Conditions: 150 mM KOAc, 10 mM MgCl2 and 150 mM bicine (pH 8.5), 24 C. Chemical mapping of a 177-nucleotide RNA with DMS. Reactivities are given for positions 27 through 126. It was measured as part of the RMDB library OK2TRN. DMS adducts were read by reverse transcription with MarathonRT.
RNA sequence: GGGAACGACUCGAGUAGAGUCGAAAAGAGAGGCAGCCGAGGCCAGCAGGGGCACUCUUCCCAAAGCGGGGUUGUGCAGAGAAUGUCCACAGAACCUUCCACGGCGGGCACAAGCAAGGGGAGAAGACGCGUAUAUAAGUUUCGACUUAUAUACGCGAAAAGAAACAACAACAACAAC
Reactivity to DMS in 0.01 (KOAc 150mM, MgCl2 10mM, bicine 150mM(pH8.5), 24C), signal-to-noise 4, nucleotides 027 to 126: g000a090g010a110g010g010c050a050g020c030c030g010a100g010g020c040c050a050g030c080a100g010g000g020g010c040a070c030u000c050u000u010c000c010c010a070a120a110g010c130g020g000g000g020u010u000g010u000g000c050a090g000a080g010a070a060u000g000u000c030c050a070c130a090g000a070a070c060c020u000u000c030c030a120c130g010g000c050g000g010g000c040a050c060a060a090g010c070a070a080g010g000g000g000a100g010a070a080g010a170